An RNA of 177 nucleotides, treated with DMS and 2A3 and read out base by base. Source: RMDB library OK1LIB, as collected in RNAgym.

[RMDB]
RNA sequence: GGGAACGACUCGAGUAGAGUCGAAAAAAUGCAACAAACAACACCGUCCGAUAGUGAUGGGCGAUUACCAUCAGCGUACCGGUGAUCGCCGUAUCCAUGUGUUCAUGACCGGCAUCGGGAGCAUGCGAGCGGUAAUCCGGUUCGCCGGAUUACCGCUAAAAGAAACAACAACAACAAC
Reactivity to DMS in 0.01 (KOAc 150mM, MgCl2 10mM, bicine 150mM(pH8.5), 24C), signal-to-noise 1, nucleotides 027 to 126: a020a070u030g000c060a030a100c170a100a160a010c140a060a120c060a000c000c010g000u000c050c000g120a150u090a060g000u010g000a020u000g090g000g000c000g000a090u000u000a030c000c000a090u000c070a060g060c020g010u040a040c300c080g030g000u000g080a000u000c000g060c000c030g060u030a100u000c070c000a030u010g000u020g000u000u000c060a030u080g000a090c260c030g030g000c090a000u030c030g060g010g000a080g090c000a070u000g000c090g010
Reactivity to 2A3 in 0.01 (KOAc 150mM, MgCl2 10mM, bicine 150mM(pH8.5), 24C), signal-to-noise 2, nucleotides 027 to 126: a000a000u230g100c220a120a090c040a160a220a110c010a040a010c020a050c120c000g030u070c020c010g010a060u100a070g040u070g020a000u080g050g000g030c000g000a000u000u020a000c000c010a020u160c070a100g030c030g140u170a150c040c220g000g020u000g000a030u030c020g010c000c000g000u020a050u000c000c010a030u000g080u010g100u150u080c020a000u070g050a040c040c080g030g000c040a020u090c050g030g050g020a080g050c000a000u060g040c080g050
About this RNA
For DMS, 1,004 sequencing reads were counted. DMS adducts were read by reverse transcription with MarathonRT. The RNA was probed in 150 mM KOAc, 10 mM MgCl2 and 150 mM bicine (pH 8.5) at 24 C.